[RMDB]
RNA sequence: GGGAACGACUCGAGUAGAGUCGAAAACGUAAAACAGUGAGUGGACGGAACAAAUCCCCUUCCCACCUCCCCACUGUCCACUCACUGUCUUCCUAAUAGGAAAUAUAAAUCGGGGGUGGGAAGGGGACGACUCACCGUAUUUCGAUACGGUGAGUCGAAAAGAAACAACAACAACAAC
Reactivity to 2A3 in 0.01 (KOAc 150mM, MgCl2 10mM, bicine 150mM(pH8.5), 24C), signal-to-noise 2, nucleotides 027 to 126: c050g080u140a000a060a040a000c000a040g000u010g000a000g010u000g000g000a000c000g030g010a020a010c050a100a180a110u110c010c000c000c010u000u020c010c000c000a010c010c000u020c080c020c000c050a080c040u020g000u000c000c000a000c000u000c000a000c000u020g000u000c010u020u020c000c010u060a150a100u100a150g140g090a020a060a000u300a020u100a030a070a010u240c120g000g000g000g030g000u010g000g010g010a000a000g000g010g010g020a000